Source: RMDB library OK3TST, as collected in RNAgym. An RNA of 207 nucleotides, treated with DMS and 2A3 and read out base by base. 2A3 adducts were read by reverse transcription with SuperScript II with manganese. The reactions ran in a buffer of 150 mM KOAc, 10 mM MgCl2 and 150 mM bicine (pH 8.5), at 24 C.

RNA sequence: GGGAACGACUCGAGUAGAGUCGAAAAUUUCAUGGAGCCUGGCUGUCUUAUUCAAUGUAUGUGUUUUAUUUCUACUAGGACAGAGUUCAUGAGAGGGUCAGUUUGUGACCCGUGCUUUCCGGCACAUGUGUUGUCUAAAGAGACACAGCCACACAUAGUUUUAGGGGAUAUUCGUAUCCCCUAAAACAAAAGAAACAACAACAACAAC
Reactivity to DMS in 0.01 (KOAc 150mM, MgCl2 10mM, bicine 150mM(pH8.5), 24C), signal-to-noise 2, nucleotides 027 to 156: u000u010u000c020a120u000g020g010a160g020c050c050u020g060g030c000u000g000u010c020u000u000a070u000u010c030a080a050u010g020u000a040u000g010u010g010u000u010u010u010a120u000u030u000c090u010a090c080u000a100g030g010a120c080a080g000a110g040u010u000c070a060u000g010a130g010a130g000g020g040u010c010a070g020u010u000u010g020u000g010a020c010c000c000g020u000g010c070u000u000u000c040c040g010g000c030a030c040a070u000g010u000g020u000u000g030u000c060u010a060a100a110g000a140g000a060c060a030c070a050g020c020c030a050c030a050c040a100u000a160
Reactivity to 2A3 in 0.01 (KOAc 150mM, MgCl2 10mM, bicine 150mM(pH8.5), 24C), signal-to-noise 2, nucleotides 027 to 156: u040u030u060c020a020u010g130g040a090g060c010c060u030g120g030c000u000g000u060c000u040u030a030u040u090c020a050a030u050g020u070a040u030g050u010g070u080u010u080u020a240u010u160u060c060u190a150c050u080a030g000g000a000c000a010g080a020g050u050u160c060a070u140g040a020g020a040g100g000g000u010c030a070g050u070u280u300g080u080g050a000c000c000c020g000u010g010c010u020u000u020c010c000g000g010c000a010c020a010u000g020u000g020u080u000g010u000c040u060a230a070a010g060a020g010a020c010a000c030a060g040c050c000a050c000a010c010a090u110a050

Reactivities are given for positions 27 through 156.